[RMDB]
RNA sequence: GGGAACGACUCGAGUAGAGUCGAAAAGCCGGUUCACUAUCCCGACGGGUGCAGGCAAGCCGGGAGACAGCGGCAGACCGAUCUUCGACAACAAAGGACGGGUGGUGGCCAUCGUCCUAGGAGGGGCUAAGGCAAGAAUUUUCGAAUUCUUGCCUUAAAAAGAAACAACAACAACAAC
Reactivity to DMS in 0.01 (KOAc 150mM, MgCl2 10mM, bicine 150mM(pH8.5), 24C), signal-to-noise 3, nucleotides 027 to 126: g020c050c050g000g020u000u010c070a090c070u010a130u000c010c010c020g020a110c110g010g010g020u010g010c080a060g000g000c030a130a080g010c030c020g010g000g000a050g000a100c150a070g000c030g020g000c050a080g010a130c070c020g000a120u000c050u000u000c060g020a130c070a060a070c120a040a110a050g010g000a060c010g010g000g020u010g020g000u000g020g000c020c020a070u000c030g000u000c010c000u000a060g010g000a070g000g000g000g010c190
Reactivity to 2A3 in 0.01 (KOAc 150mM, MgCl2 10mM, bicine 150mM(pH8.5), 24C), signal-to-noise 1, nucleotides 027 to 126: g020c000c040g050g030u130u160c030a040c120u140a080u060c010c000c010g040a040c040g020g010g020u100g060c090a070g040g030c040a030a040g000c000c030g040g020g030a070g020a030c040a030g100c020g020g030c020a000g040a000c020c020g100a130u040c000u090u090c000g090a060c010a130a010c030a100a180a030g050g000a020c030g110g000g000u020g030g030u030g060g000c040c000a070u040c020g010u000c000c010u040a060g000g010a050g020g000g010g050c030